[RMDB]
RNA sequence: GGGAACGACUCGAGUAGAGUCGAAAAGGCCGUGCGCCAAGGCGAAGGACAACGCUUGCGGCACGUCGAUACGCGCACCCGCCAACGAGGCGCUUCGCCACAACGACGGGUCCGGGUUCGCACCGCGACGACGUUUUACUUUCGAGUAAAACGUCGUAAAAGAAACAACAACAACAAC
Reactivity to DMS in 0.01 (KOAc 150mM, MgCl2 10mM, bicine 150mM(pH8.5), 24C), signal-to-noise 3, nucleotides 027 to 126: g010g000c020c040g030u010g000c040g050c020c070a070a110g010g020c030g010a090a060g000g000a130c210a080a160c020g000c090u010u020g000c080g000g000c190a070c110g010u050c030g000a120u020a040c090g020c050g000c210a080c030c020c000g000c030c030a070a170c220g000a140g000g000c010g000c260u020u000c050g030c030c020a050c090a050a200c150g020a050c020g000g000g010u000c140c000g040g000g030u000u000c010g000c050a080c020c040g000c090g000
Reactivity to 2A3 in 0.01 (KOAc 150mM, MgCl2 10mM, bicine 150mM(pH8.5), 24C), signal-to-noise 5, nucleotides 027 to 126: g040g010c030c020g030u050g010c060g020c020c040a040a030g060g000c040g030a090a040g090g020a040c040a100a030c090g010c020u050u080g010c020g040g000c040a020c060g080u090c020g020a040u060a230c110g000c000g000c050a020c000c000c020g000c010c000a080a020c070g030a100g020g010c030g000c110u120u160c070g010c010c010a070c050a080a060c040g050a020c020g000g000g010u040c040c040g050g000g000u010u050c010g000c020a030c010c020g020c030g030
Structure probing data (DMS and 2A3) for a 177-nucleotide construct. DMS adducts were read by reverse transcription with MarathonRT. The reactions ran in a buffer of 150 mM KOAc, 10 mM MgCl2 and 150 mM bicine (pH 8.5), at 24 C. Source: RMDB library OK1LIB, as collected in RNAgym.